[RMDB]
Source information
Chemical mapping of a 177-nucleotide RNA with DMS. The RNA was probed in 150 mM KOAc, 10 mM MgCl2 and 150 mM bicine (pH 8.5) at 24 C.

RNA sequence: GGGAACGACUCGAGUAGAGUCGAAAAGCUGAGUAUACGAGGUUAGUUCAUUCUCGUAUGCUUGAUUGGACAAAUUAAAAUCUCAAUUUGGAUCAGGGCCUCCCUCCAGCGACGGCCGAACAUACAAUGGAAGCAUAUGGUUCGCCAUAUGCUUCCAAAAAGAAACAACAACAACAAC
Reactivity to DMS in 0.01 (KOAc 150mM, MgCl2 10mM, bicine 150mM(pH8.5), 24C), signal-to-noise 2, nucleotides 027 to 126: g020c090u010g040a050g020u000a010u000a010c030g030a000g000g010u000u000a090g010u000u000c280a090u010u000c000u000c020g000u000a020u000g010c000u000u010g000a090u010u000g040g000a130c040a040a010a070u020u030a080a050a130a140u030c140u010c100a030a060u000u010u000g000g000a090u000c030a050g010g000g000c040c010u000c010c010c040u000c140c040a020g010c070g020a070c170g010g040c050c020g000a050a050c120a090u050a150c190a030a080